[RMDB]
RNA sequence: GGGAACGACUCGAGUAGAGUCGAAAAGUAGCACUAUUAAGCUCUGUGGAGCAUUUUGACAGCACAGUCGAGAAAUGUGACACCACUUGGAGCACUGUGACAACUAAGUGGAACAUUGCGACACUAAGAUUUUAGUAGGUUUCGACCUACUAAAAUCAAAAGAAACAACAACAACAAC
Reactivity to DMS in 0.01 (KOAc 150mM, MgCl2 10mM, bicine 150mM(pH8.5), 24C), signal-to-noise 8, nucleotides 027 to 126: g020u000a110g000c020a070c030u000a140u000u000a100a150g000c010u000c020u000g000u010g010g020a150g020c000a030u000u000u000u010g010a120c130a080g010c190a060c290a100g000u000c020g010a230g010a020a020a020u000g000u000g000a170c300a100c010c010a020c020u010u010g010g000a070g020c060a080c170u000g010u000g010a080c070a060a090c050u000a050a040g010u000g000g010a100a060c040a090u000u000g020c080g000a180c050a050c080u010a060a140
Reactivity to 2A3 in 0.01 (KOAc 150mM, MgCl2 10mM, bicine 150mM(pH8.5), 24C), signal-to-noise 7, nucleotides 027 to 126: g060u070a000g020c020a010c070u110a070u300u150a190a040g010c010u000c030u070g070u070g070g020a020g030c010a010u010u030u030u120g040a030c020a030g090c100a080c060a140g030u040c020g030a020g130a170a060a010u040g010u040g020a040c020a040c060c000a010c000u040u080g030g010a020g020c000a020c090u110g020u050g080a080c020a070a020c050u080a090a030g020u020g020g030a060a040c020a070u060u190g030c050g040a010c010a010c050u070a140a050